[RMDB]
RNA sequence: GGGAACGACUCGAGUAGAGUCGAAAAUCUUUCAGCAUUAUUAAGACAAUCGUAUAAUGGAACCGCACCCAAUUGCUGUCGCACUUUUAAUCGUACUCAUUAUUGGAAAAAGGAUGGAAAGAUAUCAGAUAAGUAUGAAGAGGGUGCAAUAUUAGAAGACCAAGAGUAACUUCGGUUACUCUUGGUCAAAAGAAACAACAACAACAAC
Reactivity to DMS in 0.01 (KOAc 150mM, MgCl2 10mM, bicine 150mM(pH8.5), 24C), signal-to-noise 1, nucleotides 027 to 156: u030c000u040u000u000c040a210g060c020a020u000u000a020u000u000a030a040g000a100c050a040a090u000c050g020u000a060u000a070a100u000g000g020a110a070c090c060g000c030a300c020c020c020a130a130u000u030g000c000u010g020u020c080g000c050a030c000u010u000u000u000a030a190u000c050g050u000a000c020u000c030a000u000u000a040u010u010g020g000a040a160a080a100a120g020g040a170u010g000g000a040a050a180g000a020u000a080u000c030a160g000a030u000a040a020g000u000a030u000g030a100a220g020a150g000g010g000u000g030c010a060a000u000a060u020u000a170g050a190a210
Reactivity to 2A3 in 0.01 (KOAc 150mM, MgCl2 10mM, bicine 150mM(pH8.5), 24C), signal-to-noise 1, nucleotides 027 to 156: u000c010u060u180u170c080a000g050c010a020u020u070a010u140u040a090a020g070a040c130a160a020u110c130g000u120a060u020a140a130u110g040g000a140a030c160c000g000c040a000c000c020c050a100a200u200u120g000c060u020g030u020c020g000c000a060c030u000u040u000u300a130a000u010c000g010u110a020c050u010c040a070u060u120a050u080u130g110g000a030a080a000a030a030g110g020a010u080g000g040a010a010a010g020a070u100a040u170c010a000g130a080u100a210a020g000u010a040u060g000a000a060g060a040g120g010g020u000g000c000a000a000u030a020u090u000a040g100a230a060

Structure probing data (DMS and 2A3) for a 207-nucleotide construct. It was measured as part of the RMDB library OK3TST. DMS adducts were read by reverse transcription with MarathonRT. For 2A3 the reverse transcriptase was SuperScript II with manganese.